The data come from the RNA Mapping Database (RMDB), library OK3TST. Chemical mapping of a 207-nucleotide RNA with DMS. Values cover nucleotides 27 to 156. For DMS, 1,777 sequencing reads were counted.
[RMDB]
RNA sequence: GGGAACGACUCGAGUAGAGUCGAAAAUUCAAUGAAUGUAAGGAAUGCUAUAGCAAUUAUAGUGGGAAUAAUAAAUAGGAGGUGGUUAAUUACAGGCAUAUUGUUAAGAAGAGGAGUUGAACCUCUGAUUUAUAAAGUUUUAUGCAAUUACCGGGCAGAAAAUCAUUUACUUCGGUAAAUGAUUUUCAAAAGAAACAACAACAACAAC
Reactivity to DMS in 0.01 (KOAc 150mM, MgCl2 10mM, bicine 150mM(pH8.5), 24C), signal-to-noise 1, nucleotides 027 to 156: u010u000c030a120a150u000g010a150a090u030g000u010a090a090g000g000a140a050u010g000c050u000a090u000a110g030c040a150a080u000u000a030u000a000g030u020g010g030g000a110a070u010a020a110u020a080a040a140u000a110g060g000a100g060g070u000g030g000u000u000a040a150u000u020a120c040a030g050g010c000a170u000a040u000u000g010u000u020a030a110g030a150a090g020a050g010g010a180g040u030u000g000a020a120c030c000u000c000u000g000a090u000u000u000a210u000a170a020a220g000u000u000u000u000a110u010g020c000a020a070u010u000a000c020c020g000g030g000c030a180